An RNA of 177 nucleotides, treated with DMS and 2A3 and read out base by base. The RNA was probed in 150 mM KOAc, 10 mM MgCl2 and 150 mM bicine (pH 8.5) at 24 C. For 2A3 the reverse transcriptase was SuperScript II with manganese. The 2A3 profile rests on 19,561 reads. The DMS profile rests on 7,852 reads.

[RMDB]
RNA sequence: GGGAACGACUCGAGUAGAGUCGAAAAGAUAUGGACUACCCACCGCUACCUAGAGACGUAUCGGAAACGAUACGAGAACUCUAAGUAGCGAGGUCCUAAGUCAAACCUGCUACUUCGGUAGCAGGAAGAUACGCAUUAAGUUCGCUUAAUGCGUAUCAAAAGAAACAACAACAACAAC
Reactivity to DMS in 0.01 (KOAc 150mM, MgCl2 10mM, bicine 150mM(pH8.5), 24C), signal-to-noise 6, nucleotides 027 to 126: g020a050u010a220u010g000g010a010c000u000a110c020c020c010a300c100c010g000c000u000a010c010c020u000a000g000a010g020a150c000g010u000a010u000c010g010g010a100a050a190c000g010a000u000a000c000g000a100g000a120a090c000u000c000u000a000a020g010u000a000g010c000g020a010g020g000u000c010c000u000a070a140g000u010c070a120a110a210c000c000u000g000c010u000a000c000u000u010c140g000g020u000a010g000c000a000g000g010a020a040
Reactivity to 2A3 in 0.01 (KOAc 150mM, MgCl2 10mM, bicine 150mM(pH8.5), 24C), signal-to-noise 6, nucleotides 027 to 126: g030a020u120a100u190g010g010a010c030u200a220c070c020c020a020c000c010g000c010u000a000c000c000u010a000g030a040g100a300c010g000u000a010u000c000g000g030a070a060a040c010g000a000u000a000c000g000a020g030a050a040c000u010c000u000a000a010g010u010a000g000c000g000a000g000g000u000c000c010u040a280a030g080u070c080a050a040a100c010c000u000g000c000u010a000c000u030u100c300g140g000u000a010g020c000a000g000g000a000a000